[RMDB]
An RNA of 177 nucleotides, treated with 2A3 and DMS and read out base by base. Source: RMDB libraries RFM100 and RFMREP, as collected in RNAgym. Conditions: 150 mM KOAc, 10 mM MgCl2 and 150 mM bicine (pH 8.5), 24 C.
RNA sequence: GGGAACGACUCGAGUAGAGUCGAAAAUGGAGGGUGAUACUCCCGUUCAUCCCUGAGUUGCUCGUGCGUACGAUCCGUUUUCUUUGAGUCGCGUUGUUUGGGAAUGCAGCGCAAAGUAGGUGGUAAAAUCUGUAAAACUGUUCGCAGUUUUACAGAUAAAAGAAACAACAACAACAAC
Reactivity to 2A3 in 0.01 (KOAc 150mM, MgCl2 10mM, bicine 150mM(pH8.5), 24C), signal-to-noise 9, nucleotides 027 to 126: u110g030g010a060g030g020g020u060g040a080u110a170c030u050c010c000c010g050u040u050c020a100u060c010c000c010u040g060a070g050u070u090g050c020u020c060g040u040g030c030g030u060a050c020g030a040u010c030c010g040u030u040u040u040c080u070u110u140g130a100g050u130c050g010c010g020u010u010g030u030u060u070g130g020g010a040a030u040g000c000a010g000c000g000c020a010a020a010g060u070a030g010g060u050g020g010u030a050a040a000
Reactivity to DMS in 0.01 (KOAc 150mM, MgCl2 10mM, bicine 150mM(pH8.5), 24C), signal-to-noise 7, nucleotides 027 to 126: u030g010g000a080g010g010g010u000g000a150u030a160c090u000c010c020c050g010u000u010c070a100u000c010c000c020u010g000a110g010u010u010g010c030u000c050g020u010g000c050g010u010a070c090g000a060u010c030c030g020u010u000u010u010c040u000u010u020g010a090g020u000c080g010c050g020u000u000g010u010u010u020g010g010g010a080a070u010g000c030a040g010c040g010c030a040a020a060g010u010a050g000g010u000g000g010u020a070a060a090